[RMDB]
This 177-nucleotide RNA was probed chemically with DMS. Conditions: 150 mM KOAc, 10 mM MgCl2 and 150 mM bicine (pH 8.5), 24 C. The data come from the RNA Mapping Database (RMDB), library TTRINS. For DMS, 546 sequencing reads were counted.
RNA sequence: GGGAACGACUCGAGUAGAGUCGAAAAGAUAUGGAUCCCCCGCCAACUACCCACCCUGAAGGAGAGGGUGUCGGAAACGACACCUACCCACCUCCUGAACAGGAGGUUGGCGGGGGAUCCUAAGUCAUCUUGAAUUAGACUUCGGUCUAAUUCAAGAAAAAGAAACAACAACAACAAC
Reactivity to DMS in 0.01 (KOAc 150mM, MgCl2 10mM, bicine 150mM(pH8.5), 24C), signal-to-noise 1, nucleotides 027 to 126: g000a060u000a300u000g000g060a010u030c000c000c000c010c000g040c000c000a000a000c010u000a090c100c080c080a300c090c010c000u000g000a170a010g000g060a000g030a130g010g000g000u000g000u060c010g000g000a060a040a070c000g060a000c040a010c060c040u010a040c150c000c070a300c040c000u000c000c000u000g030a130a200c190a000g000g000a160g000g000u000u000g000g010c000g060g000g000g000g000a000u000c030c000u000a000a070g000u000c090a090